[RMDB]
RNA sequence: GGGAACGACUCGAGUAGAGUCGAAAAGGCGGCCGCCACCCGGCGUAUGAAGCCGAAGCCGCGGGCGCCGGGAAACUCGCGGUCGAUGUCGCGGGUCAGGCUGUAGCGGCGGAACAGUUCGCGGUCAACUGCUACGAUUAUUCGUAAUCGUAGCAGUAAAAGAAACAACAACAACAAC
Reactivity to DMS in 0.01 (KOAc 150mM, MgCl2 10mM, bicine 150mM(pH8.5), 24C), signal-to-noise 2, nucleotides 027 to 126: g010g030c080g020g010c010c010g020c030c070a120c060c040c000g000g010c010g030u000a060u000g010a140a250g010c040c000g000a090a150g000c020c020g020c010g000g020g020c130g020c000c000g010g010g000a090a090a050c050u000c050g020c010g010g030u020c150g000a050u000g010u000c000g020c010g020g000g000u010c070a100g000g030c010u000g000u010a110g020c040g010g010c020g020g010a090a100c130a040g000u010u010c090g020c030g020g010u000c080a110
Reactivity to 2A3 in 0.01 (KOAc 150mM, MgCl2 10mM, bicine 150mM(pH8.5), 24C), signal-to-noise 1, nucleotides 027 to 126: g060g010c030g010g040c010c010g010c010c000a070c050c030c020g000g000c000g030u220a120u300g200a120a000g000c000c030g010a020a010g010c000c000g020c000g010g120g050c020g020c010c000g000g000g000a090a110a000c040u050c000g000c010g020g080u120c140g040a090u230g040u080c000g000c000g000g030g020u060c060a070g050g000c030u030g050u110a010g010c020g040g000c040g020g010a020a010c020a000g050u110u160c080g010c030g000g000u030c030a030